The record gives the reactivity of an RNA of 177 nucleotides to DMS and 2A3. For DMS, 2,343 sequencing reads were counted. The 2A3 profile rests on 3,264 reads. Source: RMDB library TTRDEL, as collected in RNAgym.
RNA sequence: GGGAACGACUCGAGUAGAGUCGAAAAGAUAUGGACUGAGACAUGUCGAUGGGUCGGAAACGACCCUGCCGACAACAGCUCACAUGUCCUAAGUCAAAACUUAGCCUAACUUCGGUUAGGCUAAGAAUCUGCACAUAUUGUUCGCAAUAUGUGCAGAAAAAGAAACAACAACAACAAC
Reactivity to DMS in 0.01 (KOAc 150mM, MgCl2 10mM, bicine 150mM(pH8.5), 24C), signal-to-noise 3, nucleotides 027 to 126: g010a040u000a250u000g000g000a020c010u010g020a090g010a060c110a200u010g000u010c010g040a170u000g000g010g040u000c010g000g010a090a090a190c000g000a010c000c000c000u000g040c160c010g020a000c000a030a090c230a100g000c070u000c000a060c280a070u000g000u010c000c000u010a030a120g000u000c040a090a060a120a150c000u000u000a000g000c000c010u000a000a000c000u000u010c180g010g000u000u000a000g000g010c000u000a000a000g000a060a080
Reactivity to 2A3 in 0.01 (KOAc 150mM, MgCl2 10mM, bicine 150mM(pH8.5), 24C), signal-to-noise 2, nucleotides 027 to 126: g010a000u060a000u130g010g000a000c030u040g000a000g000a050c110a120u130g020u020c000g000a020u020g010g010g000u020c000g020g030a090a050a040c030g030a000c010c020c010u000g090c040c020g020a000c010a110a050c040a060g000c040u000c020a100c050a090u250g000u000c020c020u050a120a040g080u050c040a030a020a180a180c010u000u010a000g000c000c000u000a000a010c000u050u040c190g050g010u000u000a000g010g000c000u000a010a000g000a010a010
2A3 adducts were read by reverse transcription with SuperScript II with manganese.